[RMDB]
RNA sequence: GGGAACGACUCGAGUAGAGUCGAAAAGAUAUGGACCUAGCAACAGCCAUGGGUCGGAAACGACCUUGUGGACAUGCUGUGUCCUAAGUCAAACUAGUACAGAGCUGUUCGCAGCUCUGUACUAGAAGCUGGAUUUUAUGUUCGCAUAAAAUCCAGCAAAAGAAACAACAACAACAAC
Reactivity to DMS in 0.01 (KOAc 150mM, MgCl2 10mM, bicine 150mM(pH8.5), 24C), signal-to-noise 1, nucleotides 027 to 126: g010a050u000a280u000g000g000a020c010c040u010a020g000c000a030a050c150a140g000c010c000a010u020g010g020g010u010c000g030g000a080a060a190c010g010a020c020c000u000u010g160u000g010g000a070c070a250u020g000c010u000g020u000g010u000c000c000u000a050a120g010u000c000a070a080a290c000u000a010g020u000a000c010a000g000a000g020c020u010g010u010u020c260g030c010a020g000c000u000c020u000g010u000a000c000u000a000g000a070a120
Reactivity to 2A3 in 0.01 (KOAc 150mM, MgCl2 10mM, bicine 150mM(pH8.5), 24C), signal-to-noise 1, nucleotides 027 to 126: g030a020u030a030u130g010g000a010c020c000u010a000g020c000a000a190c050a230g000c000c000a000u010g000g000g000u000c030g020g000a100a070a020c010g000a020c000c000u150u300g050u020g010g020a110c030a070u050g000c000u010g060u020g000u000c000c000u000a070a000g040u060c070a100a050a150c010u030a000g000u010a000c000a000g020a000g010c000u040g040u120u180c300g020c200a010g010c010u000c010u000g030u000a010c000u000a000g000a000a010

The record gives the reactivity of an RNA of 177 nucleotides to DMS and 2A3. The data come from the RNA Mapping Database (RMDB), library TTRDEL. 2A3 is a SHAPE reagent: it acylates the 2'-hydroxyl of flexible nucleotides of all four kinds. For DMS the reverse transcriptase was MarathonRT. The 2A3 profile rests on 1,904 reads.